Description
Source: RMDB library OK2TST, as collected in RNAgym. An RNA of 177 nucleotides, treated with DMS and read out base by base. For DMS, 655 sequencing reads were counted. The reactions ran in a buffer of 150 mM KOAc, 10 mM MgCl2 and 150 mM bicine (pH 8.5), at 24 C. DMS adducts were read by reverse transcription with MarathonRT.
RNA sequence: GGGAACGACUCGAGUAGAGUCGAAAACUCACACGAAUUGGGGUUCACCAAGUCAAACAGUACGGGUACAAGUUGGCCCACUAUAACUCCCACCAGCUGUUGCUAAUUAGGAUGAUUCCUACUGUAACGUGUAGUAAGCCUUCGGGCUUACUACACGAAAAGAAACAACAACAACAAC
Reactivity to DMS in 0.01 (KOAc 150mM, MgCl2 10mM, bicine 150mM(pH8.5), 24C), signal-to-noise 1, nucleotides 027 to 126: c040u000c050a010c070a140c150g000a050a020u000u000g000g040g000g090u000u000c100a110c000c020a080a030g010u030c010a130a100a040c130a000g030u010a080c220g000g000g000u030a070c060a100a130g010u020u000g010g000c030c080c030a070c040u000a010u000a070a070c100u010c050c010c010a060c040c030a080g040c000u000g000u000u000g040c050u000a020a070u010u000a000g000g020a030u000g000a250u000u000c000c000u000a040c230u000g010u030a000a140